[RMDB]
Overview:
Structure probing data (2A3) for a 207-nucleotide construct. For 2A3, 457 sequencing reads were counted. It was measured as part of the RMDB library OK3TST. The reactions ran in a buffer of 150 mM KOAc, 10 mM MgCl2 and 150 mM bicine (pH 8.5), at 24 C. Reactivities are given for positions 27 through 156.
RNA sequence: GGGAACGACUCGAGUAGAGUCGAAAAUUCGGUCCUAUGGAGCGGACCGUGUGCUCCGUCAGGAUGUGGAGGUAUCGCGCCCUCCUAUGCGCGUAUGUACAUCGAUACGGUUAUGUCGCCUUUGUGUCGGCGUUUGACACUUACACAUACCGGAUAACGUCCUCAUGCAGUUCGCUGCAUGAGGACGAAAAGAAACAACAACAACAAC
Reactivity to 2A3 in 0.01 (KOAc 150mM, MgCl2 10mM, bicine 150mM(pH8.5), 24C), signal-to-noise 1, nucleotides 027 to 156: u130u000c000g000g040u010c000c000u050a060u050g190g060a100g000c100g030g020a010c020c010g000u030g010u060g020c000u000c040c060g130u080c000a000g010g000a020u030g030u050g040g060a050g030g000u060a040u110c000g000c000g000c000c000c000u000c000c000u000a000u030g000c060g000c000g030u100a000u110g040u000a040c050a080u190c130g140a270u020a230c060g020g080u140u020a040u010g050u060c020g000c030c020u110u170u090g050u070g090u130c000g000g040c000g050u030u000u010g030a000c060a000c000u070u000a300c000a000c000a000u150a290c000c000g030g000a050u080a130a140